[RMDB]
RNA sequence: GGGAACGACUCGAGUAGAGUCGAAAACGGAGCAGUUCGGCGCGGCGCUCGAGCUCGCCGCGCGGCACGGCCUGGCCGUGACAUGGCUGCAUUGCCACGCGGGCUGCGGCUAUCUCGAUGCGCAGCAGAGGAUACCUACGUUCGCGUAGGUAUCCUCAAAAGAAACAACAACAACAAC
Reactivity to DMS in 0.01 (KOAc 150mM, MgCl2 10mM, bicine 150mM(pH8.5), 24C), signal-to-noise 2, nucleotides 027 to 126: c090g000g020a160g010c060a040g020u000u000c060g010g030c020g030c010g030g020c020g020c080u000c110g000a100g030c110u000c120g000c020c010g040c010g020c030g020g010c000a030c030g000g000c010c090u020g020g040c010c020g010u000g010a050c080a100u000g000g010c010u010g020c110a110u000u000g020c010c010a050c060g020c070g000g000g000c000u010g010c030g000g010c100u010a070u000c050u000c000g000a100u010g010c030g010c090a060g010c050a210
Reactivity to 2A3 in 0.01 (KOAc 150mM, MgCl2 10mM, bicine 150mM(pH8.5), 24C), signal-to-noise 1, nucleotides 027 to 126: c060g050g000a060g010c050a020g030u080u090c060g110g000c020g000c010g070g000c010g000c010u040c090g070a010g010c020u000c010g000c000c030g030c030g000c000g010g000c010a020c020g020g040c010c150u120g150g000c010c010g020u030g020a050c050a120u110g030g000c030u060g030c060a090u040u230g040c020c000a050c030g070c030g000g030g060c060u090g000c000g050g000c010u010a040u060c030u000c020g060a050u120g030c040g000c030a050g030c000a020
The record gives the reactivity of an RNA of 177 nucleotides to DMS and 2A3. Conditions: 150 mM KOAc, 10 mM MgCl2 and 150 mM bicine (pH 8.5), 24 C. For 2A3 the reverse transcriptase was SuperScript II with manganese. The data come from the RNA Mapping Database (RMDB), library OK2TST.